[RMDB]
RNA sequence: GGGAACGACUCGAGUAGAGUCGAAAAUUGAGGUUGAUCUCGCUGGUUCUCAGCCUAUACCGACACAGUAUUCAUUUAAUGCAACUGAAGCCGGUUAGCUCAGUUAGUUAAUGCUAAUAAUGCAGAAGACCCUAUGCUAGUUCGCUAGCAUAGGGUCAAAAGAAACAACAACAACAAC
Reactivity to DMS in 0.01 (KOAc 150mM, MgCl2 10mM, bicine 150mM(pH8.5), 24C), signal-to-noise 1, nucleotides 027 to 126: u000u050g010a050g010g050u020u010g000a080u010c080u000c020g010c030u000g010g000u010u010c010u000c040a260g000c050c000u010a070u000a100c000c010g030a070c010a130c050a020g010u000a060u000u010c010a070u000u000u010a070a070u010g010c220a050a030c060u010g000a130a150g140c000c040g030g000u000u000a040g000c020u000c040a100g000u000u010a070g000u010u030a000a100u000g000c040u000a050a120u010a050a110u010g010c010a090g010a090a210
Reactivity to 2A3 in 0.01 (KOAc 150mM, MgCl2 10mM, bicine 150mM(pH8.5), 24C), signal-to-noise 1, nucleotides 027 to 126: u010u060g030a070g020g040u090u070g040a040u060c010u000c060g040c140u090g030g020u090u040c020u000c000a010g030c020c010u060a040u100a050c020c060g060a030c000a000c020a030g060u100a150u090u030c000a010u000u100u260a180a070u100g030c060a060a000c000u040g020a040a040g000c040c090g120g000u100u120a010g000c000u020c020a000g000u080u000a000g010u000u090a110a000u030g040c020u000a060a100u020a170a010u300g000c030a020g010a180a010
The record gives the reactivity of an RNA of 177 nucleotides to DMS and 2A3. High DMS reactivity at an A or C suggests that its Watson-Crick edge is free. The data come from the RNA Mapping Database (RMDB), library OK2TST. Conditions: 150 mM KOAc, 10 mM MgCl2 and 150 mM bicine (pH 8.5), 24 C.